[RMDB]
RNA sequence: GGGAACGACUCGAGUAGAGUCGAAAAGUUGUCAAUUAUUUACGUAAUAGUAGCAUGAUUUAGUACGAGAGGAACUGUCAUGCCUGAUCACUGGUCUGUAGGUUUAUCUGACAAGAUAGUGACCUGCGAUCCGGCAAUUUUUCGAAAUUGCCGGAUCAAAAGAAACAACAACAACAAC
Reactivity to 2A3 in 0.01 (KOAc 150mM, MgCl2 10mM, bicine 150mM(pH8.5), 24C), signal-to-noise 1, nucleotides 027 to 126: g000u000u000g100u040c050a050a010u000u110a120u050u230u070a180c110g080u140a080a000u160a130g190u060a040g000c000a000u000g000a000u190u000u000a040g000u020a000c010g000a000g000a040g080g000a060a000c010u000g000u000c000a030u000g000c000c000u000g040a000u200c000a080c080u000g140g040u010c000u000g020u000a020g030g000u100u020u000a040u100c000u040g100a090c040a040a000g000a020u030a040g050u010g220a090c000c000u000g000c000
Reactivity to DMS in 0.01 (KOAc 150mM, MgCl2 10mM, bicine 150mM(pH8.5), 24C), signal-to-noise 1, nucleotides 027 to 126: g010u010u000g080u030c030a110a120u050u010a060u020u050u000a070c050g000u080a030a150u030a060g010u010a050g000c030a000u000g000a000u000u000u000a040g010u000a170c000g000a230g010a240g010g000a030a150c130u030g030u010c000a030u000g010c030c040u000g000a000u000c100a000c060u000g000g000u000c060u000g080u050a080g000g000u000u000u040a040u030c030u000g000a070c300a060a060g000a000u000a000g000u000g000a000c020c000u000g030c150